An RNA of 177 nucleotides, treated with DMS and 2A3 and read out base by base.
It was measured as part of the RMDB library OK1LIB.
The RNA was probed in 150 mM KOAc, 10 mM MgCl2 and 150 mM bicine (pH 8.5) at 24 C.
RNA sequence: GGGAACGACUCGAGUAGAGUCGAAAAGAGGCAGCCGCGUCGAGGUAGGCGUACACCUGCUCGGUGAGAAGUCGGUGCUGAGGCGACGCAAGCGGCCUUGUUACGGCGGCCGUUUCCGUUAUAGGAAGCAUGACGCGAGCUUCGGUUUGCGUCGUGCAAAAGAAACAACAACAACAAC
Reactivity to DMS in 0.01 (KOAc 150mM, MgCl2 10mM, bicine 150mM(pH8.5), 24C), signal-to-noise 9, nucleotides 027 to 126: g000a050g000g000c010a040g010c010c090g000c000g010u000c010g000a030g010g010u010a100g000g000c060g020u030a120c140a120c020c000u000g000c030u000c030g000g010u020g000a140g010a090a100g010u000c110g000g010u010g000c020u010g000a130g010g010c150g000a030c010g010c050a080a100g010c030g000g000c010c010u000u010g000u010u020a080c030g010g000c050g000g010c010c000g000u010u000u000c030c000g010u020u030a080u030a100g000g010a110a110
Reactivity to 2A3 in 0.01 (KOAc 150mM, MgCl2 10mM, bicine 150mM(pH8.5), 24C), signal-to-noise 7, nucleotides 027 to 126: g030a000g010g000c000a000g010c000c010g000c000g010u020c000g000a010g010g020u030a000g000g020c010g010u030a020c020a010c010c010u010g010c010u000c020g010g030u120g000a100g040a060a010g030u040c010g010g020u070g000c010u020g030a030g020g060c010g000a000c000g000c010a010a020g020c010g010g000c000c000u010u030g020u020u070a020c020g020g000c000g000g000c010c000g000u010u000u000c010c000g010u030u070a130u040a040g070g020a050a020